[RMDB]
RNA sequence: GGGAACGACUCGAGUAGAGUCGAAAACGUCGGCGAUCAGCUUGCCGAUAUCCUGGCCAAGCGCAUCGGACGCUUCGUCGAGCGUCUCGCGCACGACGGCGACGUCGGCGAAUGCAUUGAGCAUGCAUGCUAUCCUGACCUUCGGGUCAGGAUAGCAAAAAGAAACAACAACAACAAC
Reactivity to 2A3 in 0.01 (KOAc 150mM, MgCl2 10mM, bicine 150mM(pH8.5), 24C), signal-to-noise 1, nucleotides 027 to 126: c050g030u000c000g030g010c030g060a290u040c070a080g150c070u060u080g030c050c000g000a020u010a010u120c020c040u030g050g000c020c000a120a010g020c000g020c000a020u080c060g050g030a000c020g040c040u140u020c070g300u070c060g010a010g000c000g030u000c000u050c030g090c020g030c010a030c040g120a000c010g000g000c050g050a020c010g020u000c010g020g030c010g140a060a010u090g000c040a040u000u140g080a070g050c120a000u090g020c050a030
Reactivity to DMS in 0.01 (KOAc 150mM, MgCl2 10mM, bicine 150mM(pH8.5), 24C), signal-to-noise 2, nucleotides 027 to 126: c230g020u000c030g020g000c030g010a090u000c180a260g000c240u000u010g030c000c000g000a070u000a060u000c090c010u040g040g000c050c090a110a120g040c070g040c010a080u000c110g020g000a040c010g010c010u010u000c150g020u000c120g000a060g000c000g010u000c060u000c090g030c020g000c020a100c150g000a040c040g000g000c120g000a070c000g000u000c000g000g000c030g000a140a050u000g000c000a120u000u000g000a080g040c100a090u000g010c060a110

Structure probing data (2A3 and DMS) for a 177-nucleotide construct. For 2A3, 1,272 sequencing reads were counted. For 2A3 the reverse transcriptase was SuperScript II with manganese. The reactions ran in a buffer of 150 mM KOAc, 10 mM MgCl2 and 150 mM bicine (pH 8.5), at 24 C.